This 207-nucleotide RNA was probed chemically with DMS and 2A3. High 2A3 reactivity points to a flexible backbone, as in loops and unpaired stretches.
RNA sequence: GGGAACGACUCGAGUAGAGUCGAAAAGAGAAGCCCGCAUGUUUGCCUGCACUGUCAUUUACUGUUAGCUUUUAAAAGGAAGAGGAUUCAGAAAUGAUGGCAGAAGUCAGUACGAUGCUUGCUUCAAAGGUUUCUUACUGCCAUUCCUCCACCUUGAGACCUAAAUAUCAUUCGUGAUAUUUAGGUCAAAAGAAACAACAACAACAAC
Reactivity to DMS in 0.01 (KOAc 150mM, MgCl2 10mM, bicine 150mM(pH8.5), 24C), signal-to-noise 2, nucleotides 027 to 156: g000a300g030a140a060g020c100c050c120g020c060a110u030g030u010u020u010g010c040c000u020g050c080a100c040u000g040u000c020a030u020u000u010a140c010u010g010u020u010a050g000c010u000u020u000u010a060a150a150a150g020g000a100a110g010a030g020g000a110u000u000c020a020g000a100a050a040u000g020a020u010g000g000c010a130g020a010a080g010u020c080a070g020u020a060c050g040a170u010g020c010u000u000g010c040u000u000c070a070a080a130g000g000u000u000u000c000u000u000a150c060u000g030c010c010a130u000u000c020c000u000c050c030a170c150c010u010u000g000a300
Reactivity to 2A3 in 0.01 (KOAc 150mM, MgCl2 10mM, bicine 150mM(pH8.5), 24C), signal-to-noise 4, nucleotides 027 to 156: g080a000g020a010a010g040c010c100c060g040c050a030u050g090u140u130u200g050c010c030u010g000c040a040c080u050g020u010c010a030u010u040u200a100c020u020g040u080u070a030g030c010u080u050u040u130a130a190a060a040g150g020a060a060g030a010g030g030a030u180u140c010a000g030a040a110a030u140g010a020u020g010g000c010a010g010a060a010g060u130c020a000g050u010a060c050g040a020u070g020c010u030u030g000c030u060u060c040a070a060a050g060g000u050u120u010c050u070u120a120c060u080g000c000c000a030u020u030c020c010u050c040c020a070c040c010u040u080g030a020